[RMDB]
RNA sequence: GGGAACGACUCGAGUAGAGUCGAAAAGAUAUGGACCUUGAUUAGCAACAGCUACACGUAUCGGAAACGAUAUGUAGACAUGCUAGCCAAGGUCCUAAGUCAAAACUACACAGUUCGCUGUGUAGAAGAUGCUAUGCACCUUCGGGUGCAUAGCAUCAAAAGAAACAACAACAACAAC
Reactivity to 2A3 in 0.01 (KOAc 150mM, MgCl2 10mM, bicine 150mM(pH8.5), 24C), signal-to-noise 2, nucleotides 027 to 126: g020a000u020a010u050g000g000a000c000c000u000u020g030a020u000u000a000g020c110a110a130c120a300g010c010u070a030c090a050c120g270u120a000u000c000g020g000a020a000a000c020g000a010u010a020u100g030u000a000g020a000c210a280u300g000c000u000a000g010c020c020a000a000g000g030u020c000c000u010a000a000g000u030c000a000a000a000a060c000u010a010c020a000c020a010g000u160u200c300g020c210u000g000u010g010u020a000g010a010a000
Reactivity to DMS in 0.01 (KOAc 150mM, MgCl2 10mM, bicine 150mM(pH8.5), 24C), signal-to-noise 2, nucleotides 027 to 126: g020a000u000a070u010g000g000a020c020c000u000u020g000a010u000u000a010g020c010a010a060c220a100g050c000u000a040c030a070c300g010u010a010u000c000g020g000a020a040a080c000g010a010u000a030u000g000u000a010g000a020c020a230u020g020c020u020a020g000c060c000a000a000g000g020u000c000c000u000a000a060g000u000c000a150a040a080a190c010u000a000c000a000c090a030g050u000u000c300g010c010u020g000u000g000u000a000g000a080a100